[RMDB]
RNA sequence: GGGAACGACUCGAGUAGAGUCGAAAAUGCACCACCUUCAGGACCGAGAUCAACAAUCCAAUCGGCAGUUUUGAUCACAUCUAAAUUAUGCUCGAUCACAACAAUAGUGUUACCUUGGUCUCGUAAGAUGAGGUGAAGGAUUCGUCCUUCACCUCAUAAAAGAAACAACAACAACAAC
Reactivity to 2A3 in 0.01 (KOAc 150mM, MgCl2 10mM, bicine 150mM(pH8.5), 24C), signal-to-noise 4, nucleotides 027 to 126: u100g030c030a040c050c000a020c000c040u100u080c060a040g000g060a010c030c000g020a010g000a030u050c050a000a050c020a050a060u010c060c020a050a050u070c050g050g040c030a010g000u000u000u030u040g020a020u060c070a030c020a110u050c050u110a060a070a080u220u100a100u090g010c070u070c180g010a020u040c040a030c020a150a040c020a070a100u120a180g110u050g020u070u040a050c010c000u000u020g000g010u020c000u000c040g030u030a050a040g090
Reactivity to DMS in 0.01 (KOAc 150mM, MgCl2 10mM, bicine 150mM(pH8.5), 24C), signal-to-noise 3, nucleotides 027 to 126: u020g040c070a160c010c010a110c200c040u000u000c060a090g010g040a080c040c010g000a040g010a030u010c050a030a060c050a060a090u020c120c130a090a090u010c090g000g030c150a060g000u010u000u010u000g000a020u000c180a100c080a300u000c120u010a020a050a110u010u000a060u000g000c120u010c130g000a010u000c070a040c120a010a020c150a050a070u010a010g000u000g000u000u020a120c040c030u000u010g000g020u070c000u000c020g000u000a030a060g010
An RNA of 177 nucleotides, treated with 2A3 and DMS and read out base by base. Reactivities are rounded to 0.1 and cut off at 0 and 3. The data come from the RNA Mapping Database (RMDB), library OK2TST.